[RMDB]
RNA sequence: GGGAACGACUCGAGUAGAGUCGAAAAACCGCCUCUCUACCAAACACUUGCAAGUUCUGUUUAUUGCAAGUGCAUGGAAGAGGCGAAUAGAAAACGGAAUGAUGUCCACUCCUUCGAUUAUCGUUCAGAAACCACGAUGCUUCGGCAUCGUGGUUUCAAAAGAAACAACAACAACAAC
Reactivity to 2A3 in 0.01 (KOAc 150mM, MgCl2 10mM, bicine 150mM(pH8.5), 24C), signal-to-noise 1, nucleotides 027 to 126: a000c010c000g000c000c000u000c000u010c040u070a100c000c000a030a030a030c000a000c000u000u000g010c000a000a090g030u220u180c070u090g120u140u220u120a130u000u000g050c000a000a000g000u000g040c000a010u080g000g000a060a050g000a000g000g000c000g020a030a000u040a030g110a000a190a000a000c060g020g000a150a010u030g010a060u090g060u000c020c020a030c000u010c030c000u160u060c030g000a010u060u120a030u090c030g020u010u000c020a050